Record summary: This 207-nucleotide RNA was probed chemically with 2A3.
RNA sequence: GGGAACGACUCGAGUAGAGUCGAAAAAGCCUGGUCGAUACGUCGACCAGGCAAUGCCGCCACAACGGCUUCCUGGCGUGGCGGAUCGCAUCCAAUGGAGCAACGCUCCGGAUACGUCCGGAGCGAAAAAAGCUCUGCUUCUUCGGAAGCAGAGCAAUCGUUAUAUACUCUUCGGAGUAUAUAACGAAAAAGAAACAACAACAACAAC
Reactivity to 2A3 in 0.01 (KOAc 150mM, MgCl2 10mM, bicine 150mM(pH8.5), 24C), signal-to-noise 1, nucleotides 027 to 156: a020g300c020c000u000g010g010u010c000g030a010u010a090c180g060u030c000g010a000c000c000a000g000g000c000a010a000u010g010c010c010g000c010c000a020c010a030a030c080g060g000c030u150u200c000c040u010g000g010c020g000u010g030g000c050g020g010a070u120c090g030c030a050u020c010c010a010a150u250g050g000a030g000c010a000a110c030g000c000u020c000c030g040g000a070u080a020c250g070u000c010c000g000g000a010g030c000g010a020a010a000a000a000a000g010c000u020c000u010g000c000u000u000c000u010u050c100g100g000a000a000g000c000a010g030a000g020c020a020a020